[RMDB]
RNA sequence: GGGAACGACUCGAGUAGAGUCGAAAAGUCUAGUGUGAUCGUACGGUACUACGCAGUCAUGCUCUCGAUGAUACUAGCAUGCAGGAUCCAUAGUACGACAGAGUCAUGUGCAGACGUACCUGCAGUACGCAUAUGGUGAGUUCGCUCACCAUAUGCGAAAAGAAACAACAACAACAAC
Reactivity to DMS in 0.01 (KOAc 150mM, MgCl2 10mM, bicine 150mM(pH8.5), 24C), signal-to-noise 5, nucleotides 027 to 126: g020u010c040u000a110g030u000g020u010g000a080u000c080g000u000a070c180g040g010u010a030c040u000a170c150g010c080a070g000u010c050a050u010g000c020u000c070u000c050g010a270u000g000a140u000a020c030u020a020g030c110a110u010g020c100a120g000g000a100u010c090c040a170u000a020g010u000a020c040g010a190c280a050g000a040g020u010c040a020u010g010u010g010c030a030g000a110c170g010u000a020c020c000u000g020c060a090g010u010a100
Reactivity to 2A3 in 0.01 (KOAc 150mM, MgCl2 10mM, bicine 150mM(pH8.5), 24C), signal-to-noise 4, nucleotides 027 to 126: g030u020c030u070a060g040u050g020u030g140a100u060c050g020u040a030c130g030g060u050a030c010u020a030c070g060c090a010g050u150c010a040u030g030c000u000c030u060c060g080a070u120g020a020u050a070c020u020a030g060c050a010u090g020c030a020g000g130a050u020c020c000a050u030a040g010u010a020c020g020a000c020a050g070a020g070u140c040a050u020g050u090g040c000a020g000a030c030g020u030a040c010c010u000g000c030a020g060u020a030